Structure probing data (DMS and 2A3) for a 177-nucleotide construct.
Conditions: 150 mM KOAc, 10 mM MgCl2 and 150 mM bicine (pH 8.5), 24 C.
DMS adducts were read by reverse transcription with MarathonRT.

RNA sequence: GGGAACGACUCGAGUAGAGUCGAAAAAGCAGUAGAAAUACUGCACCACUUUGUCAAACUCCGAACUUGCUAGAAUCGAAGAUACCAGGUGCUAGGGCGUAGGGAUAAGCUUUACGCCCGUGACGGAAGAUUUACCCUGGUUCGCCAGGGUAAAUCUAAAAGAAACAACAACAACAAC
Reactivity to DMS in 0.01 (KOAc 150mM, MgCl2 10mM, bicine 150mM(pH8.5), 24C), signal-to-noise 2, nucleotides 027 to 126: a070g030c000a000g000u000a030g000a200a060a120u000a000c020u020g030c000a120c020c050a120c120u000u000u000g000u030c130a050a150a180c030u040c030c000g030a080a100c040u000u010g000c040u050a020g000a160a050u010c020g020a070a060g030a050u000a030c140c020a070g000g020u010g010c100u000a050g030g000g010c000g040u000a000g000g000g000a270u070a090a120g020c010u000u010u000a000c000g000c000c010c010g000u000g010a070c030g030g020a230
Reactivity to 2A3 in 0.01 (KOAc 150mM, MgCl2 10mM, bicine 150mM(pH8.5), 24C), signal-to-noise 2, nucleotides 027 to 126: a000g000c000a000g000u020a000g050a040a040a040u020a010c010u000g020c010a000c000c000a010c000u100u150u070g100u110c070a080a080a040c040u010c000c060g050a040a040c040u020u080g050c040u070a050g130a090a130u110c050g050a080a020g000a080u120a140c000c060a030g000g000u090g080c050u110a020g010g020g010c000g000u000a000g000g020g010a060u080a230a100g140c010u020u000u000a000c000g000c000c000c000g000u000g000a000c020g020g040a030